[RMDB]
RNA sequence: GGGAACGACUCGAGUAGAGUCGAAAAUCAUCAAGAAGUAGGCUUAGGCCAAUUGCUUGGUGGUGAAAGUAGAGGGAAGGUAGCACUUCGACGCCUCUAAGUACGCUGUGGGAGUAUUGCUUAAAUCAAAAGCACAGCGACUUCGGUCGCUGUGCAAGAUGAAUGUGGACUUCGGUCCACAUUCAUCAAAAGAAACAACAACAACAAC
Reactivity to 2A3 in 0.01 (KOAc 150mM, MgCl2 10mM, bicine 150mM(pH8.5), 24C), signal-to-noise 1, nucleotides 027 to 156: u030c000a000u020c000a020a020g040a060a050g030u110a030g020g000c030u080u130a100g240g000c020c020a010a080u050u060g000c010u000u010g000g010u010g000g000u000g020a130a070a010g050u050a010g000a030g010g020g010a030a030g030g000u020a060g020c020a010c050u070u040c030g030a020c030g060c000c000u000c060u040a060a030g050u030a020c040g010c060u040g000u040g080g020g040a080g030u060a080u120u060g000c040u090u090a050a120a110u090c040a020a120a100a000g000c000a000c000a000g040c000g000a000c000u010u080c120g080g000u030c000g000c000u030g000u000g000c000a000a010